An RNA of 177 nucleotides, treated with 2A3 and DMS and read out base by base. For 2A3, 1,595 sequencing reads were counted. The reactions ran in a buffer of 150 mM KOAc, 10 mM MgCl2 and 150 mM bicine (pH 8.5), at 24 C.
RNA sequence: GGGAACGACUCGAGUAGAGUCGAAAACACUCCUUACAGCCAUUAAGUCUCUUCAAACCAGUGACAAGCUAGAACAGAACUGCUCGUGGAGUGCUGCACUGAUUAAUGAUAAUAGAUACAUUAAUGGAGUAACGUGGAAUUUCGAUUCCACGUUACUAAAAGAAACAACAACAACAAC
Reactivity to 2A3 in 0.01 (KOAc 150mM, MgCl2 10mM, bicine 150mM(pH8.5), 24C), signal-to-noise 2, nucleotides 027 to 126: c010a030c000u010c010c010u070u190a040c050a040g050c010c010a010u040u040a010a000g010u000c010u000c000u090u000c030a040a030a040c030c010a020g000u010g150a160c020a070a010g010c010u060a030g050a150a020c020a040g080a110a090c080u160g020c060u030c050g120u090g020g080a060g080u070g010c000u000g000c010a020c000u010g010a040u050u090a080a050u090g060a020u090a080a060u120a230g040a020u070a030c030a110u030u030a020a020u030g080g000
Reactivity to DMS in 0.01 (KOAc 150mM, MgCl2 10mM, bicine 150mM(pH8.5), 24C), signal-to-noise 2, nucleotides 027 to 126: c150a130c160u000c000c030u000u010a130c160a130g030c000c020a010u010u000a030a080g010u010c060u010c070u000u000c090a050a050a060c110c000a020g020u000g010a120c060a070a070g020c050u000a160g010a040a100c060a040g010a120a090c120u000g020c040u010c060g020u000g010g000a060g020u000g010c050u000g020c010a030c030u010g010a000u010u010a080a040u000g000a080u000a050a100u020a040g000a060u000a040c030a040u000u000a000a020u000g000g000